[RMDB]
RNA sequence: GGGAACGACUCGAGUAGAGUCGAAAACCGUAGGGUAAUGUAGCGACAUGGAGGCUCUUGGCGAACAUAUUCGAAAGAGUAUGCUAACCUUGAGUCUCCAACAGCGCUACCGCUUACCCUAAACGGAAACUAGGAAGUACUUCGGUACUUCCUAGAACAAGUAAUGUGCGUUCGCGCACAUUACUUGAAAAGAAACAACAACAACAAC
Reactivity to DMS in 0.01 (KOAc 150mM, MgCl2 10mM, bicine 150mM(pH8.5), 24C), signal-to-noise 2, nucleotides 027 to 156: c010c010g030u000a040g000g000g010u010a070a000u000g000u000a030g020c010g020a050c090a300u000g030g000a000g030g000c000u000c000u000u000g020g010c010g030a070a060c000a010u000a000u010u000c010g020a210a130a300g000a010g010u000a000u000g000c010u000a140a040c000c010u000u000g010a040g030u000c000u000c000c000a000a020c010a120g030c020g030c020u000a000c010c020g000c060u000u010a010c010c010c000u000a000a000a090c010g010g000a160a110a220c000u000a000g010g010a050a030g010u000a000c010u000u000c290g100g040u000a020c000u000u000c000c000u010a000g000a050a210
Reactivity to 2A3 in 0.01 (KOAc 150mM, MgCl2 10mM, bicine 150mM(pH8.5), 24C), signal-to-noise 3, nucleotides 027 to 156: c000c000g010u010a010g000g010g010u010a020a020u250g000u000a030g000c010g180a260c080a110u050g000g000a000g000g040c000u000c000u000u000g010g000c010g000a040a000c010a000u010a010u010u000c010g040a100a070a030g000a020g010u000a000u000g000c000u010a000a010c000c000u000u000g000a000g000u010c010u000c000c000a000a000c000a000g010c000g000c010u000a010c000c000g010c000u000u000a000c010c000c000u020a030a030a000c010g030g040a100a030a050c010u010a010g000g000a000a000g000u010a000c010u030u090c300g100g000u000a000c000u000u000c040c000u000a000g000a000a010
Source: RMDB library RNAMAK, as collected in RNAgym. Chemical mapping of a 207-nucleotide RNA with DMS and 2A3. For 2A3 the reverse transcriptase was SuperScript II with manganese. For DMS, 4,489 sequencing reads were counted. The RNA was probed in 150 mM KOAc, 10 mM MgCl2 and 150 mM bicine (pH 8.5) at 24 C. Reactivities are given for positions 27 through 156. For 2A3, 6,554 sequencing reads were counted.